[RMDB]
RNA sequence: GGGAACGACUCGAGUAGAGUCGAAAACGCACUCGCAGCUUAAGAACCUGCGCUGAGCCCUUCUCCCCCAGCUUGCCUGUGUCCUAGGGAAUUGGAAGGUCAUCCUUCACAGGAUCGUGUGGAAGUCAUUACUCGUGAGUGUUCGCACUCACGAGAAGAAAAAGGGUAGGUUCGCCUACCCUUUUUCAAAAGAAACAACAACAACAAC
Reactivity to DMS in 0.01 (KOAc 150mM, MgCl2 10mM, bicine 150mM(pH8.5), 24C), signal-to-noise 2, nucleotides 027 to 156: c020g000c050a070c070u010c050g010c060a130g000c040u000u020a120a210g000a090a160c240c020u000g030c030g000c090u000g010a080g020c050c000c040u000u000c020u000c060c020c050c010c020a060g010c030u000u020g020c050c000u000g020u020g040u000c030c040u010a100g000g020g000a090a130u000u000g020g030a050a080g050g000u010c070a080u000c010c010u000u000c020a140c050a070g000g020a030u000c100g000u000g020u000g010g010a130a300g020u010c010a150u000u000a140c000u000c000g000u010g030a040g010u000g030u000u000c300g030c000a030c000u000c000a000c000g000a000g000a010a040